[RMDB]
RNA sequence: GGGAACGACUCGAGUAGAGUCGAAAAGAAAGAAAGAAAGAAAUCUGACAGAAUGACGGGUUCGAUCGUUGUGGUCGGCGGGCCACCACGUCAUUCCUUCGCACUGUCUCCGGGCAGACCGCCAUAAAAAAGCGGAUCUACUUCGGUAGAUCCGCAACCUAAAUGACCUGUUCGCAGGUCAUUUAGGAAAAGAAACAACAACAACAAC
Reactivity to 2A3 in 0.01 (KOAc 150mM, MgCl2 10mM, bicine 150mM(pH8.5), 24C), signal-to-noise 2, nucleotides 027 to 156: g030a020a050a000g070a010a060a030g110a040a100a030g040a060a120a020u090c100u100g020a040c020a050g120a120a140u080g030a030c020g020g020g000u040u180c040g040a140u140c040g020u020u040g000u020g000g010u020c060g000g020c060g000g000g020c000c000a000c020c010a010c000g010u000c000a020u040u030c000c000u090u160c070g010c040a060c020u000g010u000c000u010c040c050g030g010g020c000a010g030a110c000c020g000c000c020a070u250a020a140a010a000a000a010g000c010g000g000a000u000c000u000a000c010u020u030c110g080g000u000a000g000a010u000c000c000g000c000a010a000